[RMDB]
RNA sequence: GGGAACGACUCGAGUAGAGUCGAAAAGAUAUGGAGCCAACAUGGGAGCUCGUGGUCGGAAACGACCACAGAGCGAAGAACAUGCUGGCUCCUAAGUCAAAGCUGCUAUUUCUUCGGAAAUAGCAGCGAGUCGAUGUUAGUUCGCUAACAUCGACUCAAAAGAAACAACAACAACAAC
Reactivity to DMS in 0.01 (KOAc 150mM, MgCl2 10mM, bicine 150mM(pH8.5), 24C), signal-to-noise 2, nucleotides 027 to 126: g010a020u010a040u000g000g020a030g050c000c000a000a010c000a000u000g010g020g010a140g030c010u000c000g000u000g010g010u000c000g010g020a000a000a040c000g000a030c000c020a010c010a040g020a000g020c000g000a080a200g020a140a130c000a010u000g010c050u000g010g000c000u000c010c000u000a000a040g000u000c010a090a130a190g020c000u010g000c000u000a000u000u000u000c000u000u000c220g030g000a030a000a000u000a010g000c000a000g010c000
Reactivity to 2A3 in 0.01 (KOAc 150mM, MgCl2 10mM, bicine 150mM(pH8.5), 24C), signal-to-noise 1, nucleotides 027 to 126: g010a000u020a000u030g020g010a000g000c010c000a010a010c000a020u020g010g050g140a300g000c010u000c000g000u010g000g020u000c020g020g000a020a000a010c010g000a000c040c030a000c060a010g000a000g000c010g010a130a060g040a030a020c010a000u020g000c000u000g010g000c010u010c000c000u000a000a010g000u000c000a070a090a060g000c000u000g000c000u000a020u000u010u010c040u000u100c300g150g000a010a010a020u020a000g000c000a000g010c000

This 177-nucleotide RNA was probed chemically with DMS and 2A3. The reactions ran in a buffer of 150 mM KOAc, 10 mM MgCl2 and 150 mM bicine (pH 8.5), at 24 C. For DMS, 2,486 sequencing reads were counted. Source: RMDB library TTRDES, as collected in RNAgym. For DMS the reverse transcriptase was MarathonRT.